[RMDB]
RNA sequence: GGGAACGACUCGAGUAGAGUCGAAAACAUGUGGAUGUGAGUCAGCCAGGAUUGAUGGAGCAUUGACUGCUAAUUAGACUCCUCUGGGAAGGUAGAGGCGGGCAACACAUAAUGCCUUCGCUGUGGGAGCUUCAUCAAGGGGAUGAUUCUUGGACGGUCACGUAUGUGAAUUCGUUCACAUACGUGAAAAAGAAACAACAACAACAAC
Reactivity to 2A3 in 0.01 (KOAc 150mM, MgCl2 10mM, bicine 150mM(pH8.5), 24C), signal-to-noise 7, nucleotides 027 to 156: c070a070u120g030u070g100g030a080u020g060u050g050a030g030u030c040a010g020c040c010a050g060g080a180u040u050g000a010u040g000g020a010g010c070a090u040u120g110a080c060u030g020c050u090a090a110u110u070a070g050a130c020u000c000c010u000c010u010g090g020g020a020a010g040g000u060a020g010a040g090g060c080g020g010g020c050a150a020c060a010c010a120u170a210a030u140g010c000c000u050u050c100g020c120u020g000u150g020g010g000a020g010c010u020u020c020a030u020c010a020a050g040g000g010g000a030u050g010a020u070u030c030u030u070g060g020a050c040g030g020
Reactivity to DMS in 0.01 (KOAc 150mM, MgCl2 10mM, bicine 150mM(pH8.5), 24C), signal-to-noise 3, nucleotides 027 to 156: c040a080u020g040u000g040g030a100u010g020u010g010a190g000u000c010a060g010c020c010a140g010g000a210u000u010g020a080u000g000g010a070g020c030a150u000u000g010a140c040u000g000c040u000a070a120u000u000a120g010a160c030u000c010c010u000c050u000g020g000g020a050a040g010g040u000a090g010a130g020g020c020g020g000g010c050a080a080c090a070c050a090u000a060a130u000g020c000c010u000u000c020g020c030u000g000u010g010g000g000a080g010c010u000u000c000a080u000c020a030a060g000g010g030g010a090u000g010a050u000u000c010u000u000g000g020a100c050g030g000
Record summary: Source: RMDB library OK3TST, as collected in RNAgym. Chemical mapping of a 207-nucleotide RNA with 2A3 and DMS. Conditions: 150 mM KOAc, 10 mM MgCl2 and 150 mM bicine (pH 8.5), 24 C. DMS adducts were read by reverse transcription with MarathonRT. For DMS, 6,657 sequencing reads were counted.